[RMDB]
RNA sequence: GGGAACGACUCGAGUAGAGUCGAAAAGAUAUGGACCCAGAGGUCUAGUGGGAAUCAGCAUCGAUCUUGCCCUCGGAAACGAGGGUCAAGGGAGCUGUGGCCCACUAGACCUCUGGGUCCUAAGUCACAUUAAGGUGUGGUUCGCCACACCUUAAUGAAAAGAAACAACAACAACAAC
Reactivity to DMS in 0.01 (KOAc 150mM, MgCl2 10mM, bicine 150mM(pH8.5), 24C), signal-to-noise 3, nucleotides 027 to 126: g010a050u000a300u010g000g010a020c010c000c010a010g020a020g010g020u000c000u000a010g020u000g000g010g010a210a090u010c000a020g020c010a300u000c180g000a060u010c000u000u010g010c020c000c000u000c000g000g000a100a080a260c020g000a010g000g010g000u030c010a000a010g000g010g000a040g020c000u000g020u010g000g020c000c000c000a010c020u000a010g010a000c000c000u010c000u000g000g000g010u000c000c010u010a010a030g020u000c030a300
Annotation
This 177-nucleotide RNA was probed chemically with DMS. The data come from the RNA Mapping Database (RMDB), library TTRINS. The DMS profile rests on 4,113 reads.